[RMDB]
RNA sequence: GGGAACGACUCGAGUAGAGUCGAAAAGUGUUCUGUUGGAUGUAGUCGAUAGACCUUGAGGGAGCGGUUGUGCGUACGAAGCUUUAGGUAAGCUAAGGCCGAUAGGCGGCGGCUAUCGCGUACGGGAGCGACCUCAAGCAUCCUGUAGCCGCCGUGGGUAUAUAUAAUAGUUCGCUAUUAUAUAUACAAAAGAAACAACAACAACAAC
Reactivity to DMS in 0.01 (KOAc 150mM, MgCl2 10mM, bicine 150mM(pH8.5), 24C), signal-to-noise 2, nucleotides 027 to 156: g000u000g010u000u010c040u000g020u020u000g000g010a090u000g020u010a080g010u010c020g030a230u000a110g020a030c050c010u000u000g000a070g010g000g010a240g020c050g040g020u000u010g040u000g020c020g070u010a040c030g010a120a100g000c010u000u010u010a010g010g030u010a100a160g020c000u000a010a030g010g020c000c040g010a080u000a030g020g030c000g000g020c020g040g000c000u000a010u000c050g020c030g030u000a020c040g030g020g000a180g030c000g000a170c020c010u010c010a010a050g010c040a050u000c010c010u000g010u010a080g000c010c000g020c000c020g000u000g000g010
Reactivity to 2A3 in 0.01 (KOAc 150mM, MgCl2 10mM, bicine 150mM(pH8.5), 24C), signal-to-noise 2, nucleotides 027 to 156: g060u050g020u060u070c040u030g090u120u060g030g000a040u040g070u300a060g000u030c010g020a170u080a170g020a030c000c000u020u010g000a010g010g010g000a050g020c030g060g040u140u120g050u160g060c000g010u000a000c040g030a150a040g000c000u000u000u000a040g010g030u140a160a060g080c000u010a010a020g000g000c050c000g010a020u000a050g040g030c020g000g000c000g000g000c000u000a010u060c010g020c000g020u020a010c000g000g080g020a070g020c000g010a020c000c010u020c010a000a000g000c000a020u000c010c000u000g020u040a010g000c000c000g000c020c000g000u020g000g060